The record gives the reactivity of an RNA of 177 nucleotides to DMS and 2A3. For 2A3, 4,106 sequencing reads were counted. DMS adducts were read by reverse transcription with MarathonRT.
[RMDB]
RNA sequence: GGGAACGACUCGAGUAGAGUCGAAAAUUCCUUUCUUCUACCCACUGUUCGAGGAUCUCCUCCCUCUCCUUCGAGGACGGGUUCGCGACGGGUUGGCUCAUCCUGAGAUCGGGGAGCCUCGACGAUCGAUAAGUUCAAUCUUCGGAUUGAACUUAUCAAAAGAAACAACAACAACAAC
Reactivity to DMS in 0.01 (KOAc 150mM, MgCl2 10mM, bicine 150mM(pH8.5), 24C), signal-to-noise 3, nucleotides 027 to 126: u000u000c010c010u000u000u000c080u010u000c080u000a140c020c010c010a100c180u000g000u020u010c010g010a010g000g020a080u010c020u000c020c010u000c020c030c030u000c020u000c040c300u010u000c210g010a050g020g000a040c090g020g010g020u000u010c060g010c060g000a160c150g010g020g030u000u010g010g000c020u000c010a110u000c000c000u010g000a090g000a040u010c170g000g010g000g010a020g000c000c000u000c020g000a030c020g000a050u000c130
Reactivity to 2A3 in 0.01 (KOAc 150mM, MgCl2 10mM, bicine 150mM(pH8.5), 24C), signal-to-noise 2, nucleotides 027 to 126: u030u020c010c000u030u070u040c060u080u020c020u060a080c000c010c010a040c090u090g070u150u020c020g010a010g050g020a150u080c010u020c030c000u040c000c010c000u000c010u010c020c040u160u170c080g060a020g000g010a010c010g030g000g000u010u120c020g020c010g080a120c090g110g080g010u060u040g010g010c000u010c010a080u040c020c020u060g010a040g000a050u050c020g020g010g000g020a010g000c000c010u000c000g000a000c000g010a040u070c020